[RMDB]
RNA sequence: GGGAACGACUCGAGUAGAGUCGAAAAUGGGAUGGAGAGGAAGAGGUCCAGUUGAUCGCGGCUGUUCCAGGAAAGAACGUGGUCAACGUCCAGACAAAACCGAGCUUGUUCAAAGUGAGGAAUGGGGCGACAGUGUUACAUUCGUGUAACACUGUCGAAAAGAAACAACAACAACAAC
Reactivity to 2A3 in 0.01 (KOAc 150mM, MgCl2 10mM, bicine 150mM(pH8.5), 24C), signal-to-noise 4, nucleotides 027 to 126: u060g000g020g040a030u070g050g030a080g020a040g110g040a080a050g010a050g100g000u040c040c000a030g000u000u010g030a030u020c020g020c010g080g010c050u080g110u190u040c050c060a050g080g070a070a090a020g060a090a030c000g000u010g000g010u000c000a000a010c010g000u030c010c020a020g010a040c030a010a050a010a000c010c010g000a020g020c040u040u070g010u270u200c120a120a050a010g030u060g040a020g010g000a040a060u110g000g020g000g000
Reactivity to DMS in 0.01 (KOAc 150mM, MgCl2 10mM, bicine 150mM(pH8.5), 24C), signal-to-noise 5, nucleotides 027 to 126: u010g000g030g010a110u000g020g000a130g010a080g000g000a120a060g010a080g020g010u010c040c090a120g010u000u000g000a020u000c030g030c020g010g000c030u010g000u000u000c050c100a140g000g010a080a070a070g000a060a100c020g040u000g000g010u000c030a010a030c010g010u000c080c100a140g010a080c090a040a080a130a130c030c020g010a210g010c030u000u000g020u010u010c170a090a040a030g010u000g010a240g010g000a070a080u010g000g000g010g000
Chemical mapping of a 177-nucleotide RNA with 2A3 and DMS. Reactivities are given for positions 27 through 126. Conditions: 150 mM KOAc, 10 mM MgCl2 and 150 mM bicine (pH 8.5), 24 C. For 2A3 the reverse transcriptase was SuperScript II with manganese. The 2A3 profile rests on 4,877 reads. DMS adducts were read by reverse transcription with MarathonRT.